RNA sequence: GGGAACGACUCGAGUAGAGUCGAAAAUAGAGGAGCCGCUAGAAGUAGAUUGCGUUUUAAGCCAUAGUUUGCGCCCGAUGGCUGCAGGUUCAUUGCUUCGCGCGCAUUACAAAGAUAAUGCAUCAAAGGGUGAUAUUUAUUUCGAUAAAUAUCACCCAAAAGAAACAACAACAACAAC
Reactivity to DMS in 0.01 (KOAc 150mM, MgCl2 10mM, bicine 150mM(pH8.5), 24C), signal-to-noise 4, nucleotides 027 to 126: u010a110g000a190g020g010a110g030c100c060g020c050u000a080g010a080a060g030u000a040g000a090u000u010g010c040g020u010u000u010u010a080a100g010c020c040a030u000a060g000u010u000u000g000c070g010c020c060c050g020a040u000g010g000c030u000g000c070a040g010g000u010u000c110a070u000u010g010c020u000u000c080g000c150g030c140g000c000a010u010u000a010c060a120a090a100g000a130u000a030a030u000g010c030a140u010c100a060a080a160
Reactivity to 2A3 in 0.01 (KOAc 150mM, MgCl2 10mM, bicine 150mM(pH8.5), 24C), signal-to-noise 2, nucleotides 027 to 126: u080a010g070a020g110g040a020g050c050c020g020c100u080a040g050a100a010g020u090a000g010a160u100u040g000c000g070u070u040u080u110a020a000g020c000c000a010u020a020g040u030u130u050g010c010g010c000c020c050g030a060u080g020g010c050u050g050c010a010g010g010u030u080c010a020u030u150g000c020u020u040c010g000c000g000c000g040c050a010u000u000a010c030a060a210a010g060a070u090a050a000u060g020c000a030u160c070a080a020a300
This 177-nucleotide RNA was probed chemically with DMS and 2A3. The reactions ran in a buffer of 150 mM KOAc, 10 mM MgCl2 and 150 mM bicine (pH 8.5), at 24 C. For 2A3 the reverse transcriptase was SuperScript II with manganese. It was measured as part of the RMDB library OK2TST. For 2A3, 1,385 sequencing reads were counted.